[RMDB]
RNA sequence: GGGAACGACUCGAGUAGAGUCGAAAAGAUAUGGAACUACCCUUCUUUUGACGUCGGUUCAUCGGAAACGAUGAACUCGACGAUAAGAAGGUAGUUCCUAAGUCAAAACGGUCUCUUCGGAGACCGACAAGGAUUACUGGUUCGCCAGUAAUCCUUGAAAAGAAACAACAACAACAAC
Reactivity to 2A3 in 0.01 (KOAc 150mM, MgCl2 10mM, bicine 150mM(pH8.5), 24C), signal-to-noise 1, nucleotides 027 to 126: g020a010u040a020u130g000g010a000a000c010u030a060c160c170c000u010u030c040u090u170u130u300g300a210c120g000u000c010g010g010u030u010c000a000u000c000g000g010a050a040a030c020g010a000u000g000a000a000c010u020c010g000a000c000g000a000u040a050a020g010a000a000g000g010u000a000g000u000u000c000c000u010a020a000g020u000c010a020a020a050a140c030g000g000u000c000u000c000u020u100c240g180g000a010g010a010c020c000g000a010
Reactivity to DMS in 0.01 (KOAc 150mM, MgCl2 10mM, bicine 150mM(pH8.5), 24C), signal-to-noise 4, nucleotides 027 to 126: g000a030u000a300u010g000g010a010a000c000u000a000c120c080c070u000u000c010u000u000u010u000g010a200c130g020u000c000g020g010u000u000c000a000u000c000g020g020a090a060a130c010g010a020u000g010a000a000c010u000c030g030a010c010g000a060u010a000a010g000a040a020g000g010u000a010g000u000u000c000c000u000a010a050g000u000c010a120a090a120a240c030g010g000u000c000u000c000u000u010c230g020g000a020g000a000c000c000g010a050